[RMDB]
Overview:
The record gives the reactivity of an RNA of 177 nucleotides to DMS and 2A3. High DMS reactivity at an A or C suggests that its Watson-Crick edge is free. Values cover nucleotides 27 to 126.

RNA sequence: GGGAACGACUCGAGUAGAGUCGAAAACAACAGGAGUACGCCGCCGAGAUUGGUAUGGAGCAUCACUUGGGGCUUACCUGUGAUCCUGUGGAUGGCUUGGUGCAGAUUCCUUGUAUUGAGCGCAAUGCUCCGAUAGUGGGUUCGCCCACUAUCGGAGAAAAGAAACAACAACAACAAC
Reactivity to DMS in 0.01 (KOAc 150mM, MgCl2 10mM, bicine 150mM(pH8.5), 24C), signal-to-noise 2, nucleotides 027 to 126: c140a200a030c010a060g000g000a170g030u000a050c110g000c020c080g000c000c010g020a040g000a170u000u020g000g000u000a090u000g010g010a120g040c050a030u000c050a120c000u000u000g010g000g000g010c010u000u000a140c000c050u010g000u000g010a040u000c000c020u010g010u010g000g010a100u020g000g000c020u000u000g030g000u000g010c040a060g000a160u010u000c120c070u000u000g030u000a110u000u000g020a030g040c020g040c150a070a120u000g010
Reactivity to 2A3 in 0.01 (KOAc 150mM, MgCl2 10mM, bicine 150mM(pH8.5), 24C), signal-to-noise 2, nucleotides 027 to 126: c040a020a000c000a020g020g040a030g120u070a030c080g000c040c000g140c080c000g040a020g030a110u130u170g040g050u120a120u150g120g080a090g100c050a010u000c000a010c020u020u010g010g010g020g000c000u010u020a070c000c000u000g020u010g040a000u060c000c000u070g020u130g170g080a140u090g080g000c000u020u000g000g000u010g000c020a010g020a250u130u220c060c020u070u000g030u040a070u010u090g030a000g000c030g000c100a020a160u150g060
The data come from the RNA Mapping Database (RMDB), library OK2TST. DMS adducts were read by reverse transcription with MarathonRT.